This 177-nucleotide RNA was probed chemically with 2A3 and DMS. The DMS profile rests on 731 reads. The reactions ran in a buffer of 150 mM KOAc, 10 mM MgCl2 and 150 mM bicine (pH 8.5), at 24 C. DMS adducts were read by reverse transcription with MarathonRT. For 2A3 the reverse transcriptase was SuperScript II with manganese.
RNA sequence: GGGAACGACUCGAGUAGAGUCGAAAACUUACUCAUCGAGUGAUCCUGCGCCGAAAAUGAUUGGCGAUCAAGCGUUAUACCGAAGCUCUGGACUUUGCCGCAAGGCAGAGUGGUAGAAGAGCGUUGCGGCAACAGUUUAGUUCGCUAAACUGUUGCCAAAAGAAACAACAACAACAAC
Reactivity to 2A3 in 0.01 (KOAc 150mM, MgCl2 10mM, bicine 150mM(pH8.5), 24C), signal-to-noise 1, nucleotides 027 to 126: c000u040u040a010c010u010c040a040u030c040g000a000g060u000g040a050u010c010c010u050g050c050g000c000c030g080a050a090a040a170u300g100a300u050u030g010g030c030g020a120u140c070a040a070g080c050g100u090u110a080u080a130c090c010g020a070a050g010c000u000c010u000g030g010a010c000u030u010u010g000c000c000g020c040a050a000g000g060c010a080g000a010g020u000g050g090u120a030g030a190a020g000a000g060c020g000u000u060g010c000
Reactivity to DMS in 0.01 (KOAc 150mM, MgCl2 10mM, bicine 150mM(pH8.5), 24C), signal-to-noise 1, nucleotides 027 to 126: c120u010u010a090c070u000c010a070u000c010g050a060g000u000g000a090u030c000c020u020g020c000g040c010c010g000a020a060a100a120u010g020a140u000u020g000g000c000g000a080u000c160a140a130g000c080g000u000u030a130u010a110c050c010g020a080a090g000c010u000c010u000g040g000a040c000u000u000u000g000c000c000g030c300a140a120g020g000c010a010g000a010g000u000g020g000u020a040g020a140a010g010a020g000c020g000u010u010g000c150